[RMDB]
RNA sequence: GGGAACGACUCGAGUAGAGUCGAAAAUGUAUUUGCCUAAAUACAGCAAUCUCACCUGCUCAUCUAUUGCAAUAGAGGACUCAGAAGUCAUUUCACAGAACUUAUCAAUGAUAAAGGACAACACUGUUAUGUUUCCUGGAACCAAAGCCUAUGAAGAACGUUAAUGUAAUUUCGAUUACAUUAACGUAAAAGAAACAACAACAACAAC
Reactivity to 2A3 in 0.01 (KOAc 150mM, MgCl2 10mM, bicine 150mM(pH8.5), 24C), signal-to-noise 9, nucleotides 027 to 156: u080g020u010a020u020u050u100g110c020c030u090a020a020a010u040a020c010a010g040c030a060a090u030c020u010c050a050c030c040u040g010c030u030c040a110u020c060u070a100u090u140g030c010a050a040u030a080g070a030g020g050a030c020u020c100a060g030a140a010g070u040c030a050u050u130u080c070a070c020a060g070a110a050c040u070u070a090u160c060a140a110u120g040a020u090a100a100a020g020g010a020c020a050a000c060a030c050u060g060u200u100a070u080g020u010u050u010c010c000u020g020g020a030a020c050c020a060a030a020g040c010c020u090a090u140g080a030a060g040a050
Reactivity to DMS in 0.01 (KOAc 150mM, MgCl2 10mM, bicine 150mM(pH8.5), 24C), signal-to-noise 5, nucleotides 027 to 156: u020g030u000a040u010u010u000g010c100c070u000a090a070a060u000a050c010a040g010c080a050a110u000c030u010c020a090c070c030u000g010c060u000c050a100u000c040u000a090u010u010g010c050a090a130u000a070g010a110g010g030a080c030u000c030a150g010a070a110g000u010c020a100u000u000u010c030a090c050a100g010a060a070c050u000u000a100u000c070a060a060u010g000a100u000a070a120a050g010g010a070c070a030a050c020a070c040u000g020u000u000a200u000g010u000u000u000c010c000u010g000g020a100a100c030c040a040a040a100g020c040c020u000a080u000g010a080a130g020a120
Structure probing data (2A3 and DMS) for a 207-nucleotide construct. Reactivities are given for positions 27 through 156. Values are in units of 0.01, from 0 to 300, in steps of 10.